[RMDB]
RNA sequence: GGGAACGACUCGAGUAGAGUCGAAAAUGCAGUCUCAUGGGCUGAGUACCUCGAGACCUUUGCCUUCGGACUGGGCCGCUUUGUUCUGAAGGAGGAGGCGCCGCGCAUCGUGCCAGAGGAAGUGGAGACGCCCCGUUAUAUUCGUAUAACGGGGCGUAAAAGAAACAACAACAACAAC
Reactivity to DMS in 0.01 (KOAc 150mM, MgCl2 10mM, bicine 150mM(pH8.5), 24C), signal-to-noise 1, nucleotides 027 to 126: u010g000c090a090g000u000c010u000c140a110u020g020g010g010c030u000g000a150g020u000a130c070c020u000c180g020a160g000a090c050c060u020u000u020g010c010c040u000u010c090g020g000a050c040u000g000g020g030c060c090g010c060u010u000u000g030u010u010c020u020g020a090a020g020g010a040g000g030a050g020g000c050g000c100c040g020c140g000c050a060u020c070g030u000g000c020c010a050g000a100g000g030a080a100g030u000g000g020a140g000